[RMDB]
RNA sequence: GGGAACGACUCGAGUAGAGUCGAAAAGUUAGUUCGCUAACGUUAUAGAUAUGGACGGUCUGUUCCUACUGCCUCGUUGAAAUAGUUUCGGAAACGAAACUAUGGAGAGGCAGGUCAGGAACGACCGUCCUAAGUCGUGGACGCCAUUCGUGGCGAAACUAAUGUAUCACUUCGGUGAUACAUUAGUAAAAGAAACAACAACAACAAC
Reactivity to DMS in 0.01 (KOAc 150mM, MgCl2 10mM, bicine 150mM(pH8.5), 24C), signal-to-noise 3, nucleotides 027 to 156: g010u010u000a040g000u000u000c200g020c010u000a030a030c060g010u010u010a110u020a110g000a100u000a270u010g010g020a030c010g000g010u000c000u000g070u000u000c000c000u010a100c000u000g010c000c000u000c010g000u000u010g000a170a120a020u000a000g010u000u000u000c000g020g000a160a120a300c000g000a040a010a020c010u000a000u000g010g000a130g020a020g010g010c000a000g000g000u000c130a020g020g020a030a010c010g000a020c010c000g000u000c000c000u000a000a050g010u000c020g010u010g010g020a160c010g040c010c010a110u000u010c190g010u000g010g000c000g010a060a120
Reactivity to 2A3 in 0.01 (KOAc 150mM, MgCl2 10mM, bicine 150mM(pH8.5), 24C), signal-to-noise 7, nucleotides 027 to 156: g030u020u030a010g010u040u080c210g020c110u010a030a010c020g020u050u120a210u150a170g010a010u020a010u050g000g000a000c000g010g000u000c050u130g010u010u010c010c000u020a120c000u000g000c000c000u020c010g200u240u050g000a010a010a000u000a000g000u000u000u000c010g000g000a030a010a010c000g000a000a000a000c000u000a000u000g000g000a040g000a000g000g000c000a000g000g000u040c250a000g000g000a000a000c000g000a000c000c000g000u000c000c000u000a000a000g000u000c000g020u050g090g050a050c020g010c020c010a040u110u110c230g110u070g020g000c010g010a120a020
Chemical mapping of a 207-nucleotide RNA with DMS and 2A3. DMS adducts were read by reverse transcription with MarathonRT. The reactions ran in a buffer of 150 mM KOAc, 10 mM MgCl2 and 150 mM bicine (pH 8.5), at 24 C. For 2A3, 12,959 sequencing reads were counted.